[RMDB]
RNA sequence: GGGAACGACUCGAGUAGAGUCGAAAAGAUAUGGAGUAUGUCGUAAGGGAGGCUACCUUGUCGGAAACGACAAGAGCCGAAGAACUUACGAGCAUACUCCUAAGUCAAAGUGACGUUCGCGUCACAAGAAGAUGAUCAUGUUCGCAUGAUCAUCUUCAAAAGAAACAACAACAACAAC
Reactivity to DMS in 0.01 (KOAc 150mM, MgCl2 10mM, bicine 150mM(pH8.5), 24C), signal-to-noise 4, nucleotides 027 to 126: g010a050u000a300u010g030g000a000g010u000a000u010g000u010c000g000u000a000a010g000g000g000a090g010g030c010u020a110c300c010u000u000g010u020c010g000g010a140a110a240c010g010a010c000a000a010g000a030g000c000c030g000a050a130g000a140a180c010u000u000a000c010g010a100g020c010a010u000a000c000u010c000c000u000a000a070g010u010c040a070a120a170g000u000g000a020c010g010u000u030c240g050c000g010u000c000a010c010a080a110
Reactivity to 2A3 in 0.01 (KOAc 150mM, MgCl2 10mM, bicine 150mM(pH8.5), 24C), signal-to-noise 3, nucleotides 027 to 126: g040a020u080a040u250g000g000a010g000u000a020u020g040u050c010g010u010a000a000g070g000g000a020g000g000c000u070a230c050c010u020u000g000u000c000g060g000a120a060a040c010g000a000c010a000a000g020a000g020c000c030g030a170a000g000a000a000c000u010u010a010c010g010a020g020c000a000u000a000c000u000c000c000u010a060a010g020u020c070a120a060a080g010u010g000a000c010g010u050u110c300g040c020g100u010c000a000c000a010a060